[RMDB]
RNA sequence: GGGAACGACUCGAGUAGAGUCGAAAAAUAAAGAGCGUAAACGCGUCAUUGAGUGACGUGAAGAUCAACCAAGUGUGCUGUCUACAGUCGUAGAUAGCGCACAUUACGCUAAGAUGAUCAUAAAAAACUGGUUAAUAAGUUUCGACUUAUUAACCAGAAAAGAAACAACAACAACAAC
Reactivity to DMS in 0.01 (KOAc 150mM, MgCl2 10mM, bicine 150mM(pH8.5), 24C), signal-to-noise 6, nucleotides 027 to 126: a090u010a040a070a110g010a050g010c000g020u000a010a030a180c010g000c000g010u000c000a040u010u010g010a170g020u010g010a020c000g010u000g000a060a110g000a040u010c050a110a140c130c080a050a030g010u000g010u000g010c000u000g000u000c000u000a000c000a170g010u010c230g020u000a000g000a000u000a000g010c000g020c000a000c010a030u000u000a010c000g020c000u000a070a100g000a100u010g010a040u000c040a110u020a000a060a070a060a110a100
Reactivity to 2A3 in 0.01 (KOAc 150mM, MgCl2 10mM, bicine 150mM(pH8.5), 24C), signal-to-noise 6, nucleotides 027 to 126: a000u270a020a100a020g090a010g000c000g000u010a010a020a040c010g010c000g010u000c010a020u090u300g210a130g290u030g010a010c000g000u000g050a060a020g020a050u070c040a020a050c040c020a060a050g000u000g000u000g000c000u000g000u000c000u010a050c070a270g130u270c210g000u110a000g000a010u000a000g010c000g000c000a000c000a000u000u000a000c000g000c000u030a020a090g100a060u140g020a020u130c100a060u300a060a140a000a020a030a060
Chemical mapping of a 177-nucleotide RNA with DMS and 2A3. For DMS, 7,235 sequencing reads were counted.